[RMDB]
RNA sequence: GGGAACGACUCGAGUAGAGUCGAAAAAACGCCUCGCUUUUUUCCUGUAAAACACCGCAACGCAGGAAAAGCGCAUGCUUAUCGGGACAACAACCCAACGCGGCAGGUGUACCAUGUACCAUUGGGCCAUAAGGUAGAACUUCGGUUCUACCUUAUGAAAAGAAACAACAACAACAAC
Reactivity to DMS in 0.01 (KOAc 150mM, MgCl2 10mM, bicine 150mM(pH8.5), 24C), signal-to-noise 3, nucleotides 027 to 126: a060a050c210g010c000c030u010c030g000c030u000u000u000u000u000u000c000c000u000g010u000a090a100a080a100c090a120c080c070g030c130a090a110c220g010c000a010g000g000a010a010a000a020g000c020g000c270a040u020g010c050u000u000a070u020c080g000g010g010a070c060a050a060c300a090a110c000c010c010a060a090c150g010c070g020g010c070a030g020g020u000g000u000a090c020c030a060u010g020u000a080c070c040a120u010u010g030g020g000c150
Reactivity to 2A3 in 0.01 (KOAc 150mM, MgCl2 10mM, bicine 150mM(pH8.5), 24C), signal-to-noise 2, nucleotides 027 to 126: a000a000c080g030c020c010u030c020g040c030u110u070u020u010u070u070c010c000u000g010u050a030a070a080a110c090a060c040c080g050c090a100a020c120g000c000a000g000g000a000a010a000a010g000c020g050c030a040u130g010c000u060u050a050u220c060g010g020g040a020c030a150a010c030a070a070c170c010c020a020a030c090g010c010g010g020c030a020g000g040u020g000u030a080c030c030a040u070g030u080a110c040c040a100u060u060g030g020g020c010

The data come from the RNA Mapping Database (RMDB), library RFMREP. An RNA of 177 nucleotides, treated with DMS and 2A3 and read out base by base. For 2A3, 2,576 sequencing reads were counted. The reactions ran in a buffer of 150 mM KOAc, 10 mM MgCl2 and 150 mM bicine (pH 8.5), at 24 C. The DMS profile rests on 2,455 reads.